[RMDB]
Conditions: 150 mM KOAc, 10 mM MgCl2 and 150 mM bicine (pH 8.5), 24 C. Structure probing data (2A3 and DMS) for a 177-nucleotide construct. Source: RMDB library RFM100, as collected in RNAgym. DMS adducts were read by reverse transcription with MarathonRT.
RNA sequence: GGGAACGACUCGAGUAGAGUCGAAAAAUCUUUUCUGCUUAACGGCCUGCCAACCCUGGAAUCGGUUCAGCCGGAGGUAGGGUCCAGCGGUCGGAAGAGCACCGCACGUCGCGCGGUGUCCGGUGCGGGUCCAGGAGUAAUUCGUUACUCCUGGACCAAAAGAAACAACAACAACAAC
Reactivity to 2A3 in 0.01 (KOAc 150mM, MgCl2 10mM, bicine 150mM(pH8.5), 24C), signal-to-noise 5, nucleotides 027 to 126: a000u010c030u030u040u020u010c030u040g040c000u030u030a100a020c010g000g000c010c030u160g000c010c030a050a030c010c000c010u030g050g070a050a080u050c020g010g030u150u170c060a110g080c020c020g050g010a030g040g090u090a010g000g020g000u090c060c030a030g000c020g010g000u020c010g020g010a100a080g020a010g000c010a000c010c000g020c000a030c030g170u150c040g030c030g000c100g150g010u050g050u040c010c020g040g010u040g000c010g030
Reactivity to DMS in 0.01 (KOAc 150mM, MgCl2 10mM, bicine 150mM(pH8.5), 24C), signal-to-noise 2, nucleotides 027 to 126: a060u000c030u020u050u000u000c100u010g040c080u000u040a060a220c050g000g010c000c010u020g060c050c090a090a120c050c040c000u020g000g000a060a110u010c030g000g000u010u000c270a210g020c040c020g030g000a060g000g020u000a050g000g000g000u030c030c070a060g000c110g000g000u000c020g000g030a050a010g010a070g020c000a040c020c000g010c050a040c060g020u080c010g000c040g060c050g010g010u000g000u000c030c020g030g000u020g000c050g000